[RMDB]
Chemical mapping of a 170-nucleotide RNA with 2A3 and DMS.
For DMS the reverse transcriptase was MarathonRT.
The 2A3 profile rests on 6,436 reads.
RNA sequence: GGGAACGACUCGAGUAGAGUCGAAAACUCGAGGAGUGGAAGGCGUUGUUGGGGGGGAGAUGGGCUUACCUACGGGAAUCCCUGGGUCCCCCUGAUGUCCAGUCCCUCCCCCGUCCGAGAGAAGGGAGUACUCGCAUGUUCGCAUGCGAGAAAAGAAACAACAACAACAAC
Reactivity to 2A3 in 0.01 (KOAc 150mM, MgCl2 10mM, bicine 150mM(pH8.5), 24C), signal-to-noise 3, nucleotides 027 to 129: c040u050c000g020a040g030g000a050g020u090g040g050a030a030g040g010c030g040u050u060g050u090u050g050g000g000g000g000g000g000a030g050a040u040g000g040g000c000u040u090a170c040c000u040a070c100g010g000g000a080a080u110c010c000c000u040g020g010g060u030c020c000c010c000c000u020g040a020u030g010u010c000c020a000g090u000c000c000c000u000c000c000c000c000c000g030u000c020c020g040a040g010a000g020a060a060g000g000g010a020g030u050a070
Reactivity to DMS in 0.01 (KOAc 150mM, MgCl2 10mM, bicine 150mM(pH8.5), 24C), signal-to-noise 3, nucleotides 027 to 129: c020u020c040g060a070g000g030a090g030u030g020g030a020a010g010g000c010g060u050u040g030u060u040g010g010g000g010g000g000g010a060g020a120u030g010g020g040c130u020u030a110c030c030u000a080c230g000g000g000a130a070u020c040c020c020u000g020g020g010u020c020c050c020c000c070u000g000a030u040g030u010c020c010a050g000u020c000c030c010u030c000c000c000c000c000g000u070c070c050g010a080g020a030g030a040a040g020g000g000a040g000u030a130
High 2A3 reactivity points to a flexible backbone, as in loops and unpaired stretches. Conditions: 150 mM KOAc, 10 mM MgCl2 and 150 mM bicine (pH 8.5), 24 C.